[RMDB]
RNA sequence: GGGAACGACUCGAGUAGAGUCGAAAAACAUGAAAAGAAAUUGAAUUCCUGUUGUAGAAUCGUUGAGCGCAACGUCGUACGUGCUGCUCUUCUUGCCGGUUCAUUUGACAAAGUCUAUGAUAUUGGCCCACUCAUCGCUUCGGCGAUGAGAAAAGAAACAACAACAACAAC
Reactivity to DMS in 0.01 (KOAc 150mM, MgCl2 10mM, bicine 150mM(pH8.5), 24C), signal-to-noise 4, nucleotides 027 to 129: a090c040a140u000g000a100a100a050a100g130a030a210a030u000u000g000a150a170u000u050c030c000u050g050u020u020g040u030a140g000a040a050u010c270g030u040u040g010a050g030c090g050c050a040a040c050g080u060c260g000u180a220c070g060u010g000c050u000g020c000u000c030u080u000c050u040u000g090c140c100g060g000u000u000c020a050u030u090u000g080a030c050a180a020a250g000u100c000u000a000u030g000a060u040a050u070u000g020g020c030c090c110a030
Reactivity to 2A3 in 0.01 (KOAc 150mM, MgCl2 10mM, bicine 150mM(pH8.5), 24C), signal-to-noise 2, nucleotides 027 to 129: a000c060a010u150g100a010a030a000a090g160a080a090a000u200u130g070a030a050u170u000c000c000u000g000u130u040g060u090a110g050a050a180u170c020g000u000u000g000a020g050c010g000c050a140a070c040g070u110c100g110u090a120c030g000u020g040c020u090g000c000u000c000u000u000c120u080u050g020c070c000g010g000u060u020c000a030u000u160u090g030a010c080a030a050a000g000u000c040u050a040u010g070a000u040a010u060u090g010g000c000c000c000a080